[RMDB]
RNA sequence: GGGAACGACUCGAGUAGAGUCGAAAAAUAUGUCAGUGGUCCCUGUAAGAGGAUCUAGGACAUAGGGAGGGUGGGUCAGAGCGCGGAUGCCCUAGAUCACGCGCGCGAGAAGUUAUGGGAACCACAACACUGAUCCAUCGUUCGCGGUGGGUUGGUGAAAAGAAACAACAACAACAAC
Reactivity to DMS in 0.01 (KOAc 150mM, MgCl2 10mM, bicine 150mM(pH8.5), 24C), signal-to-noise 6, nucleotides 027 to 126: a100u030a040u020g010u010c070a090g010u010g000g010u000c000c000c010u010g000u040a060a080g010a130g000g010a040u000c000u000a080g000g000a040c030a030u010a060g000g000g010a110g000g000g000u040g000g000g000u010c100a050g000a050g000c050g010c060g000g000a030u010g000c050c020c020u000a080g000a030u000c020a090c050g010c030g000c030g010c090g000a080g000a050a060g000u000u010a030u010g000g000g010a120a040c040c020a020c060a030a090
Reactivity to 2A3 in 0.01 (KOAc 150mM, MgCl2 10mM, bicine 150mM(pH8.5), 24C), signal-to-noise 5, nucleotides 027 to 126: a000u110a010u040g090u000c030a010g030u000g010g000u000c000c000c000u000g080u060a070a040g060a080g000g010a010u000c000u000a020g000g020a020c000a010u020a000g000g030g040a160g030g020g180u220g010g020g000u020c010a010g010a010g020c050g000c020g000g010a000u010g010c000c000c000u020a020g000a010u020c000a030c070g000c000g000c010g000c010g020a080g010a070a030g020u030u020a020u050g000g000g000a000a010c010c000a020c010a000a010